An RNA of 177 nucleotides, treated with DMS and 2A3 and read out base by base. For DMS the reverse transcriptase was MarathonRT. The RNA was probed in 150 mM KOAc, 10 mM MgCl2 and 150 mM bicine (pH 8.5) at 24 C.
RNA sequence: GGGAACGACUCGAGUAGAGUCGAAAAGAUAUGGAGCCUGUCUACUUUUGACGGAAUGUCGGAAACGACAUCUCGAUAAGUAGCAGGCUCCUAAGUCGGGGCGAUUGUACCUUCGGGUACAAUCGAAUCAUCGGGUAGUCUUCGGACUACCCGAUGAAAAAGAAACAACAACAACAAC
Reactivity to DMS in 0.01 (KOAc 150mM, MgCl2 10mM, bicine 150mM(pH8.5), 24C), signal-to-noise 1, nucleotides 027 to 126: g030a020u000a300u010g030g030a010g040c000c000u000g000u020c020u010a000c000u000u000u020u000g030a300c300g000g000a020a020u030g030u000c000g000g000a070a030a090c010g020a000c000a000u010c010u000c000g020a190u000a000a070g000u000a000g000c000a000g000g010c010u000c000c000u000a000a070g000u000c000g000g000g010g020c010g020a010u000u000g000u010a010c000c010u000u020c210g000g000g030u010a000c000a000a000u000c010g000a030a090
Reactivity to 2A3 in 0.01 (KOAc 150mM, MgCl2 10mM, bicine 150mM(pH8.5), 24C), signal-to-noise 1, nucleotides 027 to 126: g020a000u030a000u040g000g010a010g000c000c000u190g150u300c010u000a000c000u160u300u260u290g080a060c010g020g020a170a060u020g000u000c010g050g000a040a000a000c010g010a000c010a000u010c000u030c020g090a090u090a300a030g000u030a000g000c000a010g020g010c000u010c000c000u000a000a000g000u000c020g020g010g060g040c010g020a010u000u000g040u010a010c000c020u040u120c300g080g030g010u040a000c000a010a000u000c020g000a010a110
Reactivities are rounded to 0.1 and cut off at 0 and 3.